Conditions: 150 mM KOAc, 10 mM MgCl2 and 150 mM bicine (pH 8.5), 24 C. The record gives the reactivity of an RNA of 207 nucleotides to 2A3 and DMS. For DMS, 3,052 sequencing reads were counted. DMS adducts were read by reverse transcription with MarathonRT. 2A3 adducts were read by reverse transcription with SuperScript II with manganese. Values are in units of 0.01, from 0 to 300, in steps of 10.
RNA sequence: GGGAACGACUCGAGUAGAGUCGAAAACAACAUUGAACACACCGGCGGUGAACUCUCAUCAAACGGUAAGGUACUGCAUACCCAUAAACACCCCGGCGACAGCGGCGGCACAACCGGGAGUCCUUUAUGACAGCGCGUUAUCUCGGAAUGAAUCGCACAACUAGCUGUUAUUCGUAACAGCUAGUUGAAAAGAAACAACAACAACAAC
Reactivity to 2A3 in 0.01 (KOAc 150mM, MgCl2 10mM, bicine 150mM(pH8.5), 24C), signal-to-noise 4, nucleotides 027 to 156: c040a010a010c020a080u090u200g130a140a030c050a010c000a020c110c010g080g010c070g000g010u020g020a090a080c060u050c030u010c150a100u040c040a150a180a080c030g020g000u050a010a070g040g020u030a060c050u060g060c050a040u080a080c020c010c000a060u130a040a090a010c030a080c000c000c020c010g030g010c040g060a010c020a040g040c010g090g000c030g040g000c050a030c030a090a040c020c010g000g030g000a030g050u060c000c030u140u120u060a090u190g040a030c020a100g020c040g000c020g100u030u070a090u060c050u020c030g020g050a060a080u090g040a090a060u160c040g020c070a020
Reactivity to DMS in 0.01 (KOAc 150mM, MgCl2 10mM, bicine 150mM(pH8.5), 24C), signal-to-noise 2, nucleotides 027 to 156: c050a100a120c090a180u030u010g000a100a160c060a090c030a100c010c000g010g000c060g090g030u000g010a100a130c050u030c080u000c050a100u000c080a130a120a120c040g030g000u020a050a070g010g020u000a030c050u000g010c010a300u000a080c080c030c000a100u000a030a040a190c040a140c020c000c000c010g020g000c000g010a140c070a090g010c040g060g000c050g020g000c090a080c030a100a060c020c020g000g020g000a080g030u000c040c010u000u000u000a050u030g020a070c060a040g020c070g000c030g020u000u000a070u000c040u000c000g020g040a060a080u010g010a100a140u030c000g000c050a120